RNA sequence: GGGAACGACUCGAGUAGAGUCGAAAAGGAUGAUGGUGGUUCCCUCCGUGAUCGAGUAAACCAUGUUAAGGACCAGCGAUCGCAGCUCGGCGUUUACGGGGCCGAGUUGUUGGACGUCCGCCAGCAGUGAGGACGAUCUAUUCGUAGAUCGUCCUCAAAAAGAAACAACAACAACAAC
Reactivity to 2A3 in 0.01 (KOAc 150mM, MgCl2 10mM, bicine 150mM(pH8.5), 24C), signal-to-noise 1, nucleotides 027 to 126: g100g010a090u120g000a020u050g010g020u000g010g020u050u030c020c000c000u050c010c020g000u020g020a030u030c020g010a020g120u160a030a150a160c020c010a100u230g080u120u200a160a100g020g040a080c010c020a010g110c050g030a010u020c030g000c010a010g000c000u000c000g000g000c010g020u070u110u120a100c160g050g000g060g000c000c000g010a000g000u000u000g000u020u080g040g050a030c040g000u010c000c000g000c010c020a030g000c030a060g060
Reactivity to DMS in 0.01 (KOAc 150mM, MgCl2 10mM, bicine 150mM(pH8.5), 24C), signal-to-noise 3, nucleotides 027 to 126: g020g010a090u020g040a080u000g010g040u020g010g020u000u000c010c000c010u000c030c020g010u020g000a040u010c060g000a150g000u000a100a110a100c050c010a090u030g030u000u040a100a080g020g010a090c070c110a100g000c080g000a050u010c040g000c010a020g030c000u000c000g010g010c000g010u020u030u040a130c250g000g010g010g040c000c010g020a000g000u000u000g010u000u030g020g010a060c090g000u000c000c000g000c020c000a010g030c090a130g010
Annotation
The data come from the RNA Mapping Database (RMDB), library OK1LIB. Chemical mapping of a 177-nucleotide RNA with 2A3 and DMS. The DMS profile rests on 5,243 reads. For 2A3, 1,955 sequencing reads were counted. DMS (dimethyl sulfate) methylates the pairing face of unpaired adenines and cytosines.